[RMDB]
RNA sequence: GGGAACGACUCGAGUAGAGUCGAAAAGUGAAAAAGCCUCAGAAGAUGCCCAGCUUAGAAGGACACAAGAGACAGUCUGUGGACAACAUCUCCACUUCCUGGCGUCCUCAGCACUGUUGCUAGUGAAGCUACUCUGCCCAAGGUCUCCAGAGAGCUAUGCAGCUAUUAAUUUCGAUUAAUAGCUGCAAAAAGAAACAACAACAACAAC
Reactivity to DMS in 0.01 (KOAc 150mM, MgCl2 10mM, bicine 150mM(pH8.5), 24C), signal-to-noise 1, nucleotides 027 to 156: g030u000g000a020a160a160a160a150g030c040c000u010c030a060g000a110a090g010a150u010g010c020c020c090a150g000c110u000u000a080g010a160a080g010g000a240c000a020c020a080a040g010a170g050a070c010a070g000u010c010u000g050u010g030g010a160c020a060a040c060a150u010c060u000c010c060a060c080u000u000c080c040u010g030g000c150g020u010c000c000u000c010a050g030c120a050c070u010g000u010u010g020c000u000a160g000u000g020a090a040g010c000u010a090c010u010c020u010g010c010c010c080a020a130g040g010u000c020u010c010c010a060g020a090g010a150g010c010u010a140
Reactivity to 2A3 in 0.01 (KOAc 150mM, MgCl2 10mM, bicine 150mM(pH8.5), 24C), signal-to-noise 2, nucleotides 027 to 156: g050u080g000a080a100a070a050a070g020c050c030u020c080a150g050a160a010g040a040u060g020c000c020c010a000g000c020u080u040a030g020a190a100g090g010a050c030a000c020a050a040g040a020g010a050c000a020g010u000c020u060g010u010g030g020a000c010a090a000c020a130u080c020u020c100c000a020c090u110u110c010c030u040g020g000c030g020u020c010c040u020c010a000g000c100a020c010u030g010u050u010g000c010u050a030g060u070g120a060a000g000c010u120a150c010u030c000u030g030c050c000c020a120a070g010g000u030c000u000c030c010a010g080a000g010a000g040c020u170a040